[RMDB]
RNA sequence: GGGAACGACUCGAGUAGAGUCGAAAACAUGGGACUGUCCGCGACGCGACGUGGCCCCUGGUGCAUCGGUCAGGACGGUGUAGCGGCCUUGCGGAUACGGUCUCGAUGAGGCAAUAUCGGACAAGUGUAGAUCCACGUCAUUCGUGACGUGGAUCUAAAAAGAAACAACAACAACAAC
Reactivity to DMS in 0.01 (KOAc 150mM, MgCl2 10mM, bicine 150mM(pH8.5), 24C), signal-to-noise 2, nucleotides 027 to 126: c040a050u000g000g010g010a020c000u000g010u000c000c000g010c040g040a060c150g010c040g020a070c040g000u010g030g020c020c010c020c050u010g020g010u000g020c090a090u010c110g000g030u000c080a130g010g000a100c060g010g000u000g020u010a060g010c020g010g020c020c090u010u020g000c040g000g000a040u010a000c210g000g000u000c000u000c000g000a070u000g000a070g000g030c040a050a060u020a090u020c070g010g000a110c140a090a100g010u010g010
Reactivity to 2A3 in 0.01 (KOAc 150mM, MgCl2 10mM, bicine 150mM(pH8.5), 24C), signal-to-noise 1, nucleotides 027 to 126: c040a120u140g000g000g010a010c010u030g040u030c000c000g000c030g030a020c030g010c050g030a110c060g040u050g140g020c010c000c040c020u000g010g030u060g030c070a240u070c090g110g000u060c050a030g020g080a070c190g100g050u070g010u080a020g010c000g030g000c000c000u040u050g000c000g000g040a030u040a070c000g070g010u000c010u000c020g030a080u080g010a040g060g000c040a050a130u020a080u140c050g020g010a040c060a130a070g010u070g010
The record gives the reactivity of an RNA of 177 nucleotides to DMS and 2A3. For 2A3 the reverse transcriptase was SuperScript II with manganese. The RNA was probed in 150 mM KOAc, 10 mM MgCl2 and 150 mM bicine (pH 8.5) at 24 C. Reactivities are given for positions 27 through 126. The data come from the RNA Mapping Database (RMDB), library OK2TRN.